[RMDB]
RNA sequence: GGGAACGACUCGAGUAGAGUCGAAAACCGCAGCGGCCUGUCCAACGUGGUGCCGGUGGCGAUCGACAGCGAGAACGACACGCGGGUCAAACGGCUGGCCGGCAAGGCGCAGCGCGUGCUGGUGGAACUACCGAGUGGCAUUCGUGCCACUCGGUAGAAAAGAAACAACAACAACAAC
Reactivity to 2A3 in 0.01 (KOAc 150mM, MgCl2 10mM, bicine 150mM(pH8.5), 24C), signal-to-noise 1, nucleotides 027 to 126: c020c000g000c010a000g010c010g020g020c000c010u050g020u020c020c030a030a050c130g220u170g230g070u110g070c000c000g000g000u010g020g020c000g010a080u080c120g010a040c000a020g070c030g000a070g000a200a070c070g110a010c040a020c120g160c030g050g060g060u030c040a040a050a060c050g090g000c060u080g150g020c050c000g010g000c030a060a120g050g040c120g000c020a040g000c030g020c030g150u050g000c010u030g000g050u120g070g050a060a030
Reactivity to DMS in 0.01 (KOAc 150mM, MgCl2 10mM, bicine 150mM(pH8.5), 24C), signal-to-noise 1, nucleotides 027 to 126: c010c020g010c070a040g040c020g000g020c030c000u000g000u000c010c020a150a180c110g000u030g010g050u010g020c060c010g010g100u000g000g010c090g000a090u000c100g000a120c090a300g000c040g020a060g000a130a110c190g010a070c100a180c000g000c000g000g010g010u000c020a020a070a080c190g000g020c000u000g010g010c000c010g000g000c090a070a090g020g000c040g020c030a000g000c090g000c040g000u010g000c010u000g000g000u000g030g000a120a130

This 177-nucleotide RNA was probed chemically with 2A3 and DMS. The data come from the RNA Mapping Database (RMDB), library OK2TST. The reactions ran in a buffer of 150 mM KOAc, 10 mM MgCl2 and 150 mM bicine (pH 8.5), at 24 C. High DMS reactivity at an A or C suggests that its Watson-Crick edge is free. The 2A3 profile rests on 1,282 reads.